[RMDB]
RNA sequence: GGGAACGACUCGAGUAGAGUCGAAAAGCGUCGGCGACCGGAUUGUCCAGGUGGGAACGGAAUCCAUGGAAGGACACGACCGGCUGCAUGCGGUCGAGCUUGUCAGGCGGUGUGGACAACGGGUUCAGACUCCCGAUUUAUUCGUAAAUCGGGAGUCAAAAGAAACAACAACAACAAC
Reactivity to 2A3 in 0.01 (KOAc 150mM, MgCl2 10mM, bicine 150mM(pH8.5), 24C), signal-to-noise 1, nucleotides 027 to 126: g080c050g050u030c000g030g020c000g030a060c010c000g080g020a110u060u140g000u040c030c060a050g000g050u020g050g010g010a050a110c060g110g050a040a030u000c050c000a020u120g090g020a120a110g030g000a010c010a000c020g110a030c000c000g070g100c030u020g040c000a020u070g020c010g010g180u200c100g000a010g000c020u080u040g030u130c030a020g050g100c010g040g040u080g030u060g000g000a000c000a020a040c070g030g000g010u060u100c020a010
Reactivity to DMS in 0.01 (KOAc 150mM, MgCl2 10mM, bicine 150mM(pH8.5), 24C), signal-to-noise 2, nucleotides 027 to 126: g030c070g020u010c040g020g020c080g000a130c080c060g020g010a140u010u020g010u000c040c030a110g070g000u010g010g010g030a110a070c120g000g000a100a090u000c000c030a120u020g000g000a120a100g000g020a080c060a040c040g010a060c000c020g020g010c020u010g010c030a050u000g000c020g030g000u010c210g000a070g010c010u000u000g000u010c010a040g010g000c040g000g000u010g040u000g010g000a050c030a090a120c110g000g000g000u010u000c070a070
Chemical mapping of a 177-nucleotide RNA with 2A3 and DMS.
For DMS the reverse transcriptase was MarathonRT.
The reactions ran in a buffer of 150 mM KOAc, 10 mM MgCl2 and 150 mM bicine (pH 8.5), at 24 C.
Reactivities are given for positions 27 through 126.